[RMDB]
RNA sequence: GGGAACGACUCGAGUAGAGUCGAAAAGAUAUGGAAGUGACUUGUUGACGCUCCCGGUUCGGAAACGAACCGAAGGAGCGAAGGAGUGGCUUCCUAAGUCAAAGGGUCACGUCUUCGGACGUGACCCGUAACCAUACUGCUUCGGCAGUAUGGUUACAAAAGAAACAACAACAACAAC
Reactivity to 2A3 in 0.01 (KOAc 150mM, MgCl2 10mM, bicine 150mM(pH8.5), 24C), signal-to-noise 3, nucleotides 027 to 126: g000a000u040a000u130g000g010a000a010g030u100g200a050c010u090u060g140u300u190g300a230c300g000c000u000c000c000c000g000g000u000u020c020g000g000a030a040a030c010g000a010a020c000c010g070a070a040g020g000a000g000c010g000a000a000g080g020a010g000u050g060g000c010u020u000c010c000u010a060a010g030u020c040a090a150a300g000g000g010u000c000a010c000g030u020c020u100u230c300g080g000a000c000g000u000g000a000c000c000c000
Reactivity to DMS in 0.01 (KOAc 150mM, MgCl2 10mM, bicine 150mM(pH8.5), 24C), signal-to-noise 3, nucleotides 027 to 126: g000a020u000a300u010g000g000a020a020g040u000g000a040c010u000u000g020u010u000g010a300c100g010c000u000c000c000c010g010g000u010u010c000g000g000a070a040a140c000g000a000a000c000c000g000a060a140g030g010a000g020c010g010a080a040g000g000a020g020u000g010g000c010u000u010c010c000u000a020a080g010u000c020a130a150a170g010g020g000u000c000a010c000g010u010c000u000u010c260g010g010a040c000g000u000g000a000c010c000c000